[RMDB]
RNA sequence: GGGAACGACUCGAGUAGAGUCGAAAAUAGUACCUGUGAAGAUGCAGGUUACCCGCGACAGGACGGAAAGACCCCAUGGAGCUUUACUGUAGUUUGAUAUUGAGUACCUGUAAGUCAUGUACAGGAUAGGUAGGAGCCAUUGAAAUAGGGACGCUAGCAACUUUUUACCGUUCGCGGUAAAAAGUUGAAAAGAAACAACAACAACAAC
Reactivity to DMS in 0.01 (KOAc 150mM, MgCl2 10mM, bicine 150mM(pH8.5), 24C), signal-to-noise 1, nucleotides 027 to 156: u000a060g040u000a090c010c010u010g030u010g030a120a110g000a070u010g030c040a040g000g020u000u010a040c020c000c000g000c060g170a150c060a110g000g000a080c040g000g000a090a120a120g010a170c000c010c010c070a150u010g030g010a200g040c010u000u000u000a050c010u000g030u010a060g010u000u000u020g020a050u010a140u000u000g000a130g030u000a070c020c040u010g000u000a060a180g010u000c080a090u020g030u000a020c000a080g000g010a090u000a040g020g030u010a060g010g010a080g000c010c030a100u010u000g010a010a060a130u000a090g010g010g010a110c090g000c060u010a060g000
Reactivity to 2A3 in 0.01 (KOAc 150mM, MgCl2 10mM, bicine 150mM(pH8.5), 24C), signal-to-noise 1, nucleotides 027 to 156: u100a000g060u050a030c000c000u010g010u020g120a200a040g030a120u120g030c000a000g000g000u000u050a060c020c010c020g050c010g020a020c020a030g060g000a020c060g040g000a060a130a060g080a060c040c000c000c000a020u050g050g020a060g030c030u080u080u110a020c000u070g090u110a060g140u080u160u140g080a060u060a100u060u250g010a030g070u030a100c000c060u020g000u010a020a050g100u030c010a050u090g000u030a010c010a010g000g060a030u050a050g020g000u000a010g000g050a010g000c030c020a050u020u060g050a030a070a050u120a080g020g000g030a000c020g000c100u100a020g010
The record gives the reactivity of an RNA of 207 nucleotides to DMS and 2A3. In probing experiments dimethyl sulfate is read out at A N1 and C N3, which are open when not base-paired. It was measured as part of the RMDB library PDB130. For 2A3 the reverse transcriptase was SuperScript II with manganese.